[RMDB]
RNA sequence: GGGAACGACUCGAGUAGAGUCGAAAAUACUAAAAUGCCAGGUCAAUAACAGCCUUAACUGAACAGGUGCUACAAAUGUACUUUAUUGCUCACUUGUGCUAAAGUAGCUAAUGCCUUUAAUUUUCAUUGUCUUUACAGUUAUUCAUUCAAUAAGUAAGGAAAUUACGACUUUCGAGUCGUAAUUUCCAAAAGAAACAACAACAACAAC
Reactivity to 2A3 in 0.01 (KOAc 150mM, MgCl2 10mM, bicine 150mM(pH8.5), 24C), signal-to-noise 2, nucleotides 027 to 156: u160a020c040u150a070a030a010a080u120g030c080c020a040g000g020u030c040a010a100u110a130a140c010a040g000c000c000u020u040a280a100c050u060g090a000a050c000a150g000g000u010g000c000u000a030c010a000a080a010u170g000u060a040c000u000u190u070a250u300u200g000c060u010c010a040c020u040u130g020u080g000c000u020a110a000a070g000u040a010g000c070u090a040a040u060g000c000c000u080u110u110a000a100u090u190u030u000c070a050u150u060g030u090c020u070u070u050a050c000a000g020u050u050a070u090u150c090a060u000u010c030a090a120u300a210a070g040u260a140a150
The record gives the reactivity of an RNA of 207 nucleotides to 2A3. 2A3 adducts were read by reverse transcription with SuperScript II with manganese. Values cover nucleotides 27 to 156.